[RMDB]
An RNA of 207 nucleotides, treated with DMS and 2A3 and read out base by base. Conditions: 150 mM KOAc, 10 mM MgCl2 and 150 mM bicine (pH 8.5), 24 C. For 2A3, 6,984 sequencing reads were counted. For DMS the reverse transcriptase was MarathonRT.
RNA sequence: GGGAACGACUCGAGUAGAGUCGAAAACGAUCACCGGGAAUCCAACUGUUUAAUUAAAACAAAGCAUUGCGAUAAGCUUAAAAGCUUUUGACGCAAUGUGAUUUCUGCCCAGUGCUCUGAAUGUCAAAGUGAAGAGAUUCAACCUAGCACGGGUAAAUCAAUAAUGAAUGUUCGCAUUCAUUAUUGAAAAAGAAACAACAACAACAAC
Reactivity to DMS in 0.01 (KOAc 150mM, MgCl2 10mM, bicine 150mM(pH8.5), 24C), signal-to-noise 3, nucleotides 027 to 156: c040g000a100u000c020a300c010c000g040g010g040a130a080u010c060c050a120a100c040u010g010u000u000u000a060a160u000u000a070a070a040a090c050a080a120a300g010c000a020u010u000g020c000g020a150u000a020a020g010c000u010u000a130a120a160a230g030c000u000u000u000u020g020a210c040g020c000a010a020u000g010u010g010a070u000u010u010c040u010g000c040c000c020a120g070u010g010c030u020c210u020g010a030a030u000g000u000c040a050a070a210g000u010g000a140a220g000a070g000a060u000u000c020a010a070c090c120u010a040g030c000a020c020g000g040g010u000a030a030a100
Reactivity to 2A3 in 0.01 (KOAc 150mM, MgCl2 10mM, bicine 150mM(pH8.5), 24C), signal-to-noise 8, nucleotides 027 to 156: c030g040a060u090c050a020c120c040g030g020g040a030a060u040c060c030a080a050c070u060g060u090u080u090a180a180u100u160a080a120a020a050c060a010a070a010g000c000a000u000u000g000c000g030a050u020a050a010g000c000u060u190a110a150a050a020g000c000u070u050u060u130g130a060c010g000c000a000a000u000g000u000g010a010u010u040u020c030u020g010c000c010c000a050g010u000g010c010u010c030u040g030a030a020u060g080u130c050a100a080a120g120u150g180a150a110g030a060g010a020u020u000c010a040a070c050c060u100a000g000c000a000c000g000g000g000u010a020a010a020